[RMDB]
Source information: Conditions: 150 mM KOAc, 10 mM MgCl2 and 150 mM bicine (pH 8.5), 24 C. An RNA of 207 nucleotides, treated with 2A3 and DMS and read out base by base. Reactivities are given for positions 27 through 156. For DMS the reverse transcriptase was MarathonRT. The data come from the RNA Mapping Database (RMDB), library OK3TST. For DMS, 4,593 sequencing reads were counted.
RNA sequence: GGGAACGACUCGAGUAGAGUCGAAAAGGAUGCGCUGGAAGCCGAGGUUGCACGAGGCGGUCUUAUUGUGUUCCACAACGGUCACAAGUAUGACGUUCCUGCAUUGACCAAACUGGCAAAGUUGCAAUUGAACCGAGAGUUCCACCUUCCUCGUGAGUGAUUCGUAAAACUUCGGUUUUACGAAUCAAAAAGAAACAACAACAACAAC
Reactivity to 2A3 in 0.01 (KOAc 150mM, MgCl2 10mM, bicine 150mM(pH8.5), 24C), signal-to-noise 3, nucleotides 027 to 156: g050g020a050u100g040c060g020c170u040g040g050a090a080g060c010c010g040a060g030g050u050u070g040c060a030c090g080a080g140g090c080g000g010u040c010u030u040a050u020u000g020u000g060u170u210c020c000a090c120a150a070c170g000g030u010c010a010c010a020a080g080u090a150u090g010a030c010g020u100u090c020c000u000g010c020a060u010u140g020a070c020c000a140a090a080c140u170g000g010c010a060a050a090g110u180u150g040c010a050a060u070u160g010a020a010c030c020g010a030g000a010g140u030u020c020c000a040c030c000u040u010c010c010u030c030g080u100g070a060g060
Reactivity to DMS in 0.01 (KOAc 150mM, MgCl2 10mM, bicine 150mM(pH8.5), 24C), signal-to-noise 3, nucleotides 027 to 156: g000g040a070u010g010c050g020c050u010g080g000a100a160g000c050c020g030a160g040g060u000u000g030c040a100c090g000a050g000g000c220g000g030u020c030u000u010a060u000u010g030u000g010u000u000c020c040a220c090a090a150c190g010g000u000c020a020c040a020a070g030u010a080u000g020a070c020g000u000u020c050c020u010g010c050a140u010u000g020a150c020c060a060a070a150c080u000g000g030c040a080a110a150g030u010u000g000c050a090a170u020u010g010a080a070c050c030g000a140g000a180g020u010u000c010c020a100c040c040u000u010c000c020u020c030g000u010g010a170g020